[RMDB]
RNA sequence: GGGAACGACUCGAGUAGAGUCGAAAAGGUAAUCCGGGUGGUAAUCGCGUGGGUGAUCUCAGCGGUAAUGAAGCUCUAGCGCGUGGCACUAUCUUUACUCAAAGCAGAUUAUUAUCUUCUUUCACACCUCGAUCAGAGAUGGAGAAAGAUUUUAUGGGGUUAGGUAAUAGUUCGCUAUUACCUAACCAAAAGAAACAACAACAACAAC
Reactivity to 2A3 in 0.01 (KOAc 150mM, MgCl2 10mM, bicine 150mM(pH8.5), 24C), signal-to-noise 5, nucleotides 027 to 156: g050g000u020a060a020u050c060c050g010g010g020u030g010g070u060a100a060u070c020g000c060g020u070g000g030g010u080g100a130u070c040u020c050a040g020c050g040g040u050a070a060u080g080a050a010g010c010u010c040u100a040g010c030g000c000g010u020g020g000c040a010c050u040a060u080c000u040u100u030a070c020u030c110a040a060a030g030c040a030g050a140u040u030a030u080u070a050u210c010u040u000c000u010u060u020c010a020c000a010c020c010u040c020g140a300u280c120a060g000a000g010a010u020g020g000a240g010a080a010a000g010a000u020u090u070u050a200u050g130g000
Reactivity to DMS in 0.01 (KOAc 150mM, MgCl2 10mM, bicine 150mM(pH8.5), 24C), signal-to-noise 2, nucleotides 027 to 156: g020g010u000a090a060u000c010c010g000g040g040u010g020g000u000a060a080u010c050g030c090g030u000g020g030g000u010g000a070u000c020u020c040a080g000c010g040g020u020a080a120u000g000a120a120g020c050u000c040u000a120g000c030g010c030g030u000g020g050c030a030c030u000a060u000c010u000u010u000a060c050u000c050a060a100a120g030c040a110g020a100u000u000a040u000u010a060u010c060u000u000c000u000u010u010c010a090c010a010c000c000u010c020g000a150u010c190a300g020a030g020a000u010g000g000a210g010a030a020a020g000a080u010u000u000u000a130u000g020g040